[RMDB]
RNA sequence: GGGAACGACUCGAGUAGAGUCGAAAAAGCUUCGUACUUUGUUAUGAUGCUCACCAUAUCGUCUAACAAACUAAUUGAUAGUUUGCCUAUAGAUUUGAUCCUUAAUUAAGUUCGUCAUGCUCACCUACAUGUAAUUAGAGUUCGCUCUAAUUACAUGAAAAGAAACAACAACAACAAC
Reactivity to DMS in 0.01 (KOAc 150mM, MgCl2 10mM, bicine 150mM(pH8.5), 24C), signal-to-noise 9, nucleotides 027 to 126: a040g010c010u000u000c010g030u000a020c020u010u010u000g010u000u000a020u000g010a060u000g010c060u000c070a220c130c040a080u010a050u000c060g000u000c060u000a040a190c020a010a010a010c010u000a020a230u010u010g010a150u000a010g000u000u000u000g000c150c080u000a160u000a040g000a020u000u000u010g000a030u000c050c020u000u000a020a030u000u000a030a030g000u000u000c020g000u000c080a050u000g000c030u000c040a110c040c030u000a150
Reactivity to 2A3 in 0.01 (KOAc 150mM, MgCl2 10mM, bicine 150mM(pH8.5), 24C), signal-to-noise 5, nucleotides 027 to 126: a000g000c000u030u010c000g010u000a020c030u080u070u130g020u080u010a000u020g030a010u050g020c010u010c010a050c030c010a020u030a010u070c030g020u000c010u030a030a020c000a010a000a000c000u020a020a090u110u130g110a090u080a050g010u010u010u010g000c000c000u090a080u020a040g020a010u050u010u100g010a010u020c000c010u010u020a020a010u050u020a010a040g040u040u030c010g020u020c030a020u110g010c010u000c010a060c000c000u050a040